Conditions: 150 mM KOAc, 10 mM MgCl2 and 150 mM bicine (pH 8.5), 24 C. Chemical mapping of a 207-nucleotide RNA with 2A3 and DMS. Values cover nucleotides 27 to 156. The data come from the RNA Mapping Database (RMDB), library OK3TST. For DMS the reverse transcriptase was MarathonRT. As a SHAPE reagent, 2A3 marks flexible, mostly unpaired nucleotides at the ribose 2'-OH.
RNA sequence: GGGAACGACUCGAGUAGAGUCGAAAAUCAUCUGGGGUCCGUUCAUGCAUCACACCGGAUCGUUCGGUGAAACCCCGCGAGGCAUCGCCCAACACCCGUCCCUCGGCCUCGCCUCACAGCUGCACCUGGCCGCCAACGGUGUCGCCACGCUGUGCGGACAACAGGUACUAUUCGUAGUACCUGUUGUAAAAGAAACAACAACAACAAC
Reactivity to 2A3 in 0.01 (KOAc 150mM, MgCl2 10mM, bicine 150mM(pH8.5), 24C), signal-to-noise 2, nucleotides 027 to 156: u070c020a010u040c080u090g010g000g000g000u010c000c000g040u010u040c040a080u100g040c010a040u070c040a080c030a030c030c010g050g040a080u060c060g140u090u040c040g010g040u030g000a100a060a060c020c010c000c010g030c020g010a010g020g010c030a120u090c100g050c000c020c000a080a050c050a080c040c030c010g050u030c020c000c000u010c020g040g000c000c010u020c000g000c000c000u040c000a040c010a010g030c010u040g000c000a040c060c030u040g050g000c010c020g020c040c010a150a080c160g040g000u040g040u080c070g050c030c000a040c050g010c020u050g000u040g030c050g020g020
Reactivity to DMS in 0.01 (KOAc 150mM, MgCl2 10mM, bicine 150mM(pH8.5), 24C), signal-to-noise 2, nucleotides 027 to 156: u000c040a050u000c060u020g020g010g010g020u000c030c010g020u000u010c060a100u000g000c070a170u000c090a160c060a100c140c000g010g010a100u000c080g000u000u000c110g000g000u020g000a060a060a110c000c010c000c060g010c010g010a030g020g010c010a070u010c000g000c030c010c010a070a090c060a100c030c030c040g010u000c040c010c010u000c050g020g000c030c000u000c000g000c010c030u010c040a070c050a040g010c020u010g050c040a100c040c020u000g010g040c000c040g000c030c040a040a110c070g030g020u000g030u010c090g020c020c030a080c070g020c010u010g040u000g030c060g040g000